[RMDB]
RNA sequence: GGGAACGACUCGAGUAGAGUCGAAAACGUAGAUACUUCGGUAUCUACGAAAAUAACGCUGGCGUGGGACACAGCGGGAGCUAGCCUCGGAUAGUCUCAGUAAAACAGCAUGGUUCGCCAUGCUGAAGCUUGGAAUGAUGUUCGCAUCAUUCCAAGCAAAAGAAACAACAACAACAAC
Reactivity to DMS in 0.01 (KOAc 150mM, MgCl2 10mM, bicine 150mM(pH8.5), 24C), signal-to-noise 2, nucleotides 027 to 126: c020g000u000a000g010a000u010a000c000u000u010c200g030g000u000a000u010c000u000a000c000g000a010a050a110a060u000a130a180c040g020c010u000g000g000c130g040u000g000g010g010a050c000a130c010a040g000c020g000g010g000a050g010c060u010a090g020c110c020u000c100g000g010a090u010a110g020u000c020u020c020a080g000u010a060a070a070a200c020a000g000c010a010u000g000g010u000u000c270g020c000c000a010u000g000c000u020g000a030a060
Reactivity to 2A3 in 0.01 (KOAc 150mM, MgCl2 10mM, bicine 150mM(pH8.5), 24C), signal-to-noise 2, nucleotides 027 to 126: c010g000u010a010g000a010u000a000c010u040u060c290g040g000u010a000u000c000u000a000c000g010a000a000a000a010u060a040a020c030g000c020u010g020g010c090g110u060g010g040g010a000c010a000c000a050g020c000g000g050g020a040g040c070u090a020g020c020c020u060c060g060g030a090u070a110g040u030c010u010c050a000g050u110a000a100a020a020c000a000g000c000a000u010g050g000u030u030c210g010c040c000a000u010g000c000u000g000a000a000